Conditions: 150 mM KOAc, 10 mM MgCl2 and 150 mM bicine (pH 8.5), 24 C. An RNA of 207 nucleotides, treated with DMS and 2A3 and read out base by base. Source: RMDB library M2RFPK, as collected in RNAgym.
RNA sequence: GGGAACGACUCGAGUAGAGUCGAAAAUAAGCAAAAGACAACCACCUUUCCCGCUGACAAUAGCGUCAUCCCUCUGCACUUCGGUAAUAUGAGGGCACAGUAAAUCCCGCAAGGAUGAGAAUGUGAUUAAACAGUUACAGCUUCGGCUGUAACUGAAUCCAUCCCAUUAGUUCGCUAAUGGGAUGGAAAAAGAAACAACAACAACAAC
Reactivity to DMS in 0.01 (KOAc 150mM, MgCl2 10mM, bicine 150mM(pH8.5), 24C), signal-to-noise 1, nucleotides 027 to 156: u000a080a150g060c040a060a120a040a050g030a080c040a170a180c040c050a170c060c040u000u010u000c000c030c040g000c170u000g030a100c070a130a100u010a060g020c050g020u000c010a090u010c010c000c000u010c000u000g030c080a030c000u000u000c190g050g000u000a080a060u010a110u000g010a040g000g040g040c030a000c030a010g000u000a090a130a050u010c000c000c000g000c130a060a130g020g020a020u000g000a150g020a100a080u000g000u000g010a110u000u010a040a120a170c000a020g000u010u010a000c010a010g010c010u000u030c300g000g010c000u020g020u000a000a000c000u000g000a000a060
Reactivity to 2A3 in 0.01 (KOAc 150mM, MgCl2 10mM, bicine 150mM(pH8.5), 24C), signal-to-noise 2, nucleotides 027 to 156: u130a000a020g020c080a090a050a070a010g070a160c090a090a070c050c060a050c060c080u010u020u030c000c000c000g010c090u020g000a030c020a120a220u130a240g040c050g030u060c010a160u090c000c000c000u030c010u010g020c020a010c000u070u080c150g130g020u040a040a040u160a120u300g010a010g010g000g000c000a000c000a000g010u010a000a040a040u010c020c000c000g160c090a050a000g040g000a000u020g000a000g030a040a010u000g020u020g030a030u030u300a120a170a040c000a000g000u000u010a000c000a000g000c000u090u040c120g110g000c010u020g000u000a000a000c000u000g000a010a010
High 2A3 reactivity points to a flexible backbone, as in loops and unpaired stretches.